[RMDB]
RNA sequence: GGGAACGACUCGAGUAGAGUCGAAAAAAAAGCGAUGCGAGACCGGCGCGAAACGCUCUCAGUAAUCCUCCGCACUCCGGUCCGCUUAGCACGGAGUCCGAGAGUGGCAGAGCUCCGUAAAUUCGGAUCUAUACCUACCCUUCGGGGUAGGUAUAGAAAAAGAAACAACAACAACAAC
Reactivity to DMS in 0.01 (KOAc 150mM, MgCl2 10mM, bicine 150mM(pH8.5), 24C), signal-to-noise 1, nucleotides 027 to 126: a150a050a060a010g000c060g000a080u030g050c010g030a150g070a120c060c010g020g000c280g020c010g020a150a110a060c020g010c020u000c000u000c020a100g060u000a200a120u000c090c010u000c000c010g000c110a040c100u020c000c010g000g000u000c020c040g010c010u000u000a050g050c080a120c080g000g000a010g020u000c030c010g040a050g010a010g020u000g040g030c140a070g010a200g000c070u000c000c010g010u020a030a040a120u000u020c020g020g030a170
Structure probing data (DMS) for a 177-nucleotide construct. It was measured as part of the RMDB library RFMREP. DMS (dimethyl sulfate) methylates the pairing face of unpaired adenines and cytosines. For DMS the reverse transcriptase was MarathonRT.